The record gives the reactivity of an RNA of 177 nucleotides to DMS. For DMS, 2,039 sequencing reads were counted.

RNA sequence: GGGAACGACUCGAGUAGAGUCGAAAAGGGGUGCCCAGGGCCAGCAGCACAGGGGUGUCGAGUUGGCUCAGACCUCCUGCAGAGGGGGAACCCCAGUAUGGGUCUCAGGCGCUGCUCCCCACUCACGCAUAAUGUCCCACUUCGGUGGGACAUUAUGAAAAGAAACAACAACAACAAC
Reactivity to DMS in 0.01 (KOAc 150mM, MgCl2 10mM, bicine 150mM(pH8.5), 24C), signal-to-noise 3, nucleotides 027 to 126: g010g000g030g020u010g030c040c020c060a190g010g000g020c020c020a060g030c030a080g010c060a080c050a280g020g030g010g030u000g000u000c080g000a100g020u010u000g010g030c010u010c010a060g000a170c010c000u000c020c020u010g010c220a100g030a080g020g000g010g000g010a270a050c030c020c010c050a130g010u000a080u010g000g000g010u010c040u000c090a090g000g000c000g020c010u010g000c010u010c020c000c000c070a110c080u010c110a060c210g010